[RMDB]
Chemical mapping of a 207-nucleotide RNA with DMS and 2A3. Reactivities are given for positions 27 through 156. The RNA was probed in 150 mM KOAc, 10 mM MgCl2 and 150 mM bicine (pH 8.5) at 24 C. For DMS the reverse transcriptase was MarathonRT. Source: RMDB library OK3TST, as collected in RNAgym.
RNA sequence: GGGAACGACUCGAGUAGAGUCGAAAACCAUCCUAAUGGUUCUGCCGAUACACGGCCUGCGGAUGGGAGUGAGUCGGCAAUCAGGUUAAUUAUGAGCAAUGGUCCGUAUUCAUCACAGGAUGGGAGUGAGUGACGUUGACAUGCUGUCGGCUGGAACAUUCUAGCAACAGUUCGCUGUUGCUAGAAUAAAAGAAACAACAACAACAAC
Reactivity to DMS in 0.01 (KOAc 150mM, MgCl2 10mM, bicine 150mM(pH8.5), 24C), signal-to-noise 2, nucleotides 027 to 156: c050c030a040u010c010c010u000a160a150u000g000g020u000u010c040u010g040c030c020g000a050u000a170c080a080c030g020g030c000c010u020g050c150g010g000a200u000g020g000g000a100g010u030g010a300g020u000c010g040g000c030a040a080u000c020a050g030g010u010u000a020a100u000u000a100u000g020a130g010c070a040a120u000g030g030u000c020c030g010u000a140u000u000c090a100u000c010a040c060a050g040g030a130u020g000g030g000a170g030u000g010a120g040u000g010a080c020g020u010u000g010a070c070a100u000g000c000u000g030u000c040g040g070c000u000g010g010a150a150c050
Reactivity to 2A3 in 0.01 (KOAc 150mM, MgCl2 10mM, bicine 150mM(pH8.5), 24C), signal-to-noise 4, nucleotides 027 to 156: c010c000a030u050c020c030u150a150a090u150g060g000u090u090c040u080g020c010c010g040a010u100a130c040a010c010g300g010c000c010u120g030c090g250g020a160u190g090g020g000a030g040u040g020a080g020u020c020g000g000c030a020a020u060c030a040g060g000u010u050a020a060u100u140a090u160g110a070g020c060a080a180u090g020g060u010c010c000g010u050a100u090u080c040a060u040c020a030c020a100g060g070a050u050g050g000g030a050g050u050g020a090g010u050g020a010c050g030u040u040g020a030c030a070u080g050c030u040g040u080c030g050g020c030u080g020g030a050a040c040